Conditions: 150 mM KOAc, 10 mM MgCl2 and 150 mM bicine (pH 8.5), 24 C. Structure probing data (2A3 and DMS) for a 177-nucleotide construct. 2A3 adducts were read by reverse transcription with SuperScript II with manganese. For DMS, 10,203 sequencing reads were counted. DMS adducts were read by reverse transcription with MarathonRT. The data come from the RNA Mapping Database (RMDB), library OK2TST.

[RMDB]
RNA sequence: GGGAACGACUCGAGUAGAGUCGAAAAAGGAACAGGAUACCGACGACCAGCGCCGUAAGACCCGUGCGCCCGCCCGCCUGCACGCCAGCAGCACUUUCCACAUAGGCGGUUGUGGACGAGGUGCCUACUACCGAUUAUGAUUCGUCAUAAUCGGUAGAAAAGAAACAACAACAACAAC
Reactivity to 2A3 in 0.01 (KOAc 150mM, MgCl2 10mM, bicine 150mM(pH8.5), 24C), signal-to-noise 3, nucleotides 027 to 126: a000g120g010a080a030c040a020g030g020a040u080a120c030c020g060a070c040g020a020c080c020a020g020c010g000c020c020g020u050a080a020g050a080c010c000c010g030u070g030c030g020c000c010c000g020c010c010c000g040c000c010u040g010c030a030c060g060c010c020a010g020c020a000g000c020a050c040u050u060u000c010c010a020c010a080u110a060g060g040c030g030g020u040u090g020u030g010g020a020c030g030a040g000g020u010g000c000c010u060a080
Reactivity to DMS in 0.01 (KOAc 150mM, MgCl2 10mM, bicine 150mM(pH8.5), 24C), signal-to-noise 7, nucleotides 027 to 126: a070g010g020a080a090c100a070g000g010a100u010a080c060c030g010a100c070g010a130c060c060a080g010c050g020c020c020g010u000a050a090g010a090c080c050c040g020u000g000c050g000c030c020c040g010c050c020c050g000c040c010u000g010c060a070c100g010c040c030a060g000c070a070g000c040a050c070u000u000u000c000c000a050c090a070u000a070g010g010c040g000g000u010u010g010u000g000g010a060c200g010a120g010g010u000g000c030c070u000a180